An RNA of 207 nucleotides, treated with 2A3 and read out base by base.
[RMDB]
RNA sequence: GGGAACGACUCGAGUAGAGUCGAAAACUGAGCGUGCUGUACGCUGGCCGCGGGCGCAUGUCCGCAGCCACGCACACCGCGCGGCUGACAGGGGUGACCUCCCUGGUGCUAGCGGUGGGUGACGUGGACCGUCUUUCCGCGUUUGACCGCGGAGCGGGAUUUCCGCACAUUUCGAUGUGCGGAAAUCAAAAGAAACAACAACAACAAC
Reactivity to 2A3 in 0.01 (KOAc 150mM, MgCl2 10mM, bicine 150mM(pH8.5), 24C), signal-to-noise 1, nucleotides 027 to 156: c050u090g010a000g020c010g030u060g100c110u170g190u300a090c100g030c020u020g090g000c040c120g000c020g000g000g020c060g040c070a270u300g000u050c000c000g000c010a010g030c010c000a010c050g000c000a060c000a010c010c000g000c010g050c150g080g000c010u100g110a210c000a010g050g040g020g000u060g150a040c000c000u050c000c000c000u020g000g010u030g000c000u000a050g000c020g000g010u010g000g000g000u000g040a020c000g000u000g010g050a040c000c000g050u020c000u040u230u010c000c000g030c000g000u050u090u120g100a100c070c000g010c000g000g000a000g000c000g040g040
For 2A3, 646 sequencing reads were counted. The reactions ran in a buffer of 150 mM KOAc, 10 mM MgCl2 and 150 mM bicine (pH 8.5), at 24 C. It was measured as part of the RMDB library OK3TST. 2A3 adducts were read by reverse transcription with SuperScript II with manganese.